[RMDB]
RNA sequence: GGGAACGACUCGAGUAGAGUCGAAAAAUUCGUCGUGACGAUGCUUUUCAUCUGACGAAGAACGAUCACCGCAGACAACCGAACUCCUGAAAGCAAACAAAACAGCCUAUUCCAUUUAAAAAGCGCAAUCAUGAGAUGUAUUCGUACAUCUCAUGAUAAAAGAAACAACAACAACAAC
Reactivity to DMS in 0.01 (KOAc 150mM, MgCl2 10mM, bicine 150mM(pH8.5), 24C), signal-to-noise 9, nucleotides 027 to 126: a120u000u000c010g010u000c020g010u010g000a040c080g000a060u020g000c210u030u030u010u000c020a050u000c020u010g010a030c010g000a030a040g010a080a070c110g010a070u010c040a060c040c020g000c070a060g010a060c080a060a070c060c030g010a080a070c070u000c020c020u000g000a070a080a080g010c060a060a060a080c100a050a070a060a060c090a060g010c010c030u010a090u010u000c030c020a090u000u010u030a050a040a050a050a050g010c090g020c190a080
Reactivity to 2A3 in 0.01 (KOAc 150mM, MgCl2 10mM, bicine 150mM(pH8.5), 24C), signal-to-noise 9, nucleotides 027 to 126: a000u030u020c010g010u000c030g050u060g050a060c070g020a030u090g070c090u130u100u100u140c020a030u000c030u050g000a010c020g010a020a030g030a030a030c040g020a020u060c030a020c050c010g000c020a030g030a090c030a050a030c020c010g030a040a030c010u020c020c010u040g030a040a030a010g050c020a030a050a060c030a020a110a030a020c030a030g020c000c010u040a060u040u040c020c020a050u050u150u270a080a130a030a010a010g090c090g010c050a010

Chemical mapping of a 177-nucleotide RNA with DMS and 2A3. It was measured as part of the RMDB libraries RFM100 and RFMREP. Conditions: 150 mM KOAc, 10 mM MgCl2 and 150 mM bicine (pH 8.5), 24 C.